[RMDB]
RNA sequence: GGGAACGACUCGAGUAGAGUCGAAAAGUAAUAGAUAACUGGAUGCAGCGUAGGUUUCAACGCAUAUCCAGUACGAAUGGUACCUGUAAAUAAAAUAUGGAGCCUAGUACAAGUACCAACAGAAGGAUAAGCGAUGGUGAUGUCAAUCACAUUUGCAUCGACGGCAUGAUUUCGAUCAUGCCGUCGAAAAAGAAACAACAACAACAAC
Reactivity to 2A3 in 0.01 (KOAc 150mM, MgCl2 10mM, bicine 150mM(pH8.5), 24C), signal-to-noise 1, nucleotides 027 to 156: g040u030a030a120u040a180g100a130u110a020a120c040u040g010g000a010u040g120c110a110g000c110g000u040a110g040g070u000u020u030c020a000a060c000g000c000a010u040a010u160c020c010a000g000u000a000c010g140a180a060u100g000g000u020a000c030c000u000g040u000a050a110a110u130a040a120a080a000u170a050u020g010g040a050g000c050c000u020a010g020u060a010c000a020a020g010u000a000c000c010a000a090c030a120g160a090a010g040g010a040u110a170a000g040c030g000a010u080g080g050u020g000a070u020g060u160c070a070a030u060c000a000c000a000u080u090u180g000c020a050